Conditions: 150 mM KOAc, 10 mM MgCl2 and 150 mM bicine (pH 8.5), 24 C. Structure probing data (DMS and 2A3) for a 177-nucleotide construct. Values cover nucleotides 27 to 126.
RNA sequence: GGGAACGACUCGAGUAGAGUCGAAAAGCGCAAUUUGUGGUGGCGAUGGGUCAGGAGGGAUAUCUGCUUAUCUAUGUAGAUCAAACCCUAAUGGGAGGGUUCUGUUUAACAGUCUUCUCAUGAUGGACGAAAUGGAACUGUUCGCAGUUCCAUUUCGAAAAGAAACAACAACAACAAC
Reactivity to DMS in 0.01 (KOAc 150mM, MgCl2 10mM, bicine 150mM(pH8.5), 24C), signal-to-noise 2, nucleotides 027 to 126: g000c060g000c040a110a070u020u000u050g020u000g000g000u030g010g000c050g000a080u000g000g010g000u000c050a070g050g000a040g000g000g010a110u030a020u000c000u010g000c030u000u030a100u030c130u060a050u010g000u000a020g000a010u000c200a060a110a100c060c000c000u000a140a030u010g020g000g000a070g000g010g000u010u040c000u000g000u020u050u010a050a050c010a020g000u030c000u010u000c000u010c000a030u000g000a080u010g010g000a260
Reactivity to 2A3 in 0.01 (KOAc 150mM, MgCl2 10mM, bicine 150mM(pH8.5), 24C), signal-to-noise 4, nucleotides 027 to 126: g060c040g000c080a040a150u190u130u280g130u100g030g080u090g050g000c060g050a100u050g010g000g050u020c060a070g000g070a020g010g050g000a030u060a040u090c020u020g020c030u140u090a090u170c120u100a090u210g040u040a010g000a060u030c060a000a060a300c010c010c000u020a070a000u010g000g030g040a060g000g000g000u130u070c010u000g040u040u070u070a040a030c000a000g040u000c020u020u020c000u010c000a000u090g040a030u100g010g040a030